[RMDB]
RNA sequence: GGGAACGACUCGAGUAGAGUCGAAAACAUGGCCAGUGACACAAGUGAGAAUUGGAUGUUAUGACCGUCCAGAAAAGACAAGAUGAGAAAGUGCAGUAUUGACUGUCUUCAAACGCACCUGUCCUUGUCUGGUUUCGUCCUUCGGGACGAAACCAGAAAAAGAAACAACAACAACAAC
Reactivity to 2A3 in 0.01 (KOAc 150mM, MgCl2 10mM, bicine 150mM(pH8.5), 24C), signal-to-noise 1, nucleotides 027 to 126: c000a130u090g000g040c000c000a000g020u000g100a000c040a000c050a170a000g170u140g080a280g000a210a250u080u100g000g000a000u000g000u000u220a010u030g090a030c010c000g050u050c000c000a000g190a000a150a000a000g000a000c000a000a000g000a140u190g000a050g000a050a000a130g140u230g000c050a000g000u140a100u120u080g090a030c010u000g000u100c000u120u050c000a080a000a000c090g000c000a000c000c000u000g000u000c000c000u000u000g050

An RNA of 177 nucleotides, treated with 2A3 and read out base by base. Values cover nucleotides 27 to 126. The reactions ran in a buffer of 150 mM KOAc, 10 mM MgCl2 and 150 mM bicine (pH 8.5), at 24 C. Values are in units of 0.01, from 0 to 300, in steps of 10.